This 177-nucleotide RNA was probed chemically with DMS and 2A3. The RNA was probed in 150 mM KOAc, 10 mM MgCl2 and 150 mM bicine (pH 8.5) at 24 C.

[RMDB]
RNA sequence: GGGAACGACUCGAGUAGAGUCGAAAAAUGAGUCUUGUGCUGUUCAACUGCAGCAGCCCCAAGAGCGAGAUGCAAAGGGCUCGCUCCUUGAACUAUCAGGACCUAGUCAGGGGAUUUCCAGAGGAAAAACAUAAUAGCCUUUCGAGGCUAUUAUGUUAAAAGAAACAACAACAACAAC
Reactivity to DMS in 0.01 (KOAc 150mM, MgCl2 10mM, bicine 150mM(pH8.5), 24C), signal-to-noise 5, nucleotides 027 to 126: a060u010g000a100g010u010c010u010u000g020u000g000c090u010g000u000u000c040a060a070c200u000g010c110a030g020c020a050g000c010c010c020c070a110a180g000a130g020c020g010a090g010a130u000g010c060a050a220a180g000g010g010c010u000c110g020c000u000c030c050u010u010g000a030a040c030u010a080u000c010a020g000g000a050c020c040u000a040g010u010c090a090g010g000g010g000a300u000u000u000c020c010a140g000a100g010g010a040a070a060
Reactivity to 2A3 in 0.01 (KOAc 150mM, MgCl2 10mM, bicine 150mM(pH8.5), 24C), signal-to-noise 2, nucleotides 027 to 126: a010u080g000a030g020u010c000u020u020g010u030g040c100u060g020u040u020c030a130a080c130u050g030c040a010g000c010a010g000c050c000c000c000a090a010g040a020g090c030g040a130g030a190u230g060c090a150a050a000g020g060g000c020u000c110g030c010u000c010c010u000u000g000a030a000c010u000a030u080c000a000g010g020a010c000c010u030a030g050u080c060a000g050g070g000g000a020u060u050u000c020c030a070g040a060g090g080a030a070a100
For 2A3, 2,295 sequencing reads were counted. It was measured as part of the RMDB library OK2TST. For DMS the reverse transcriptase was MarathonRT.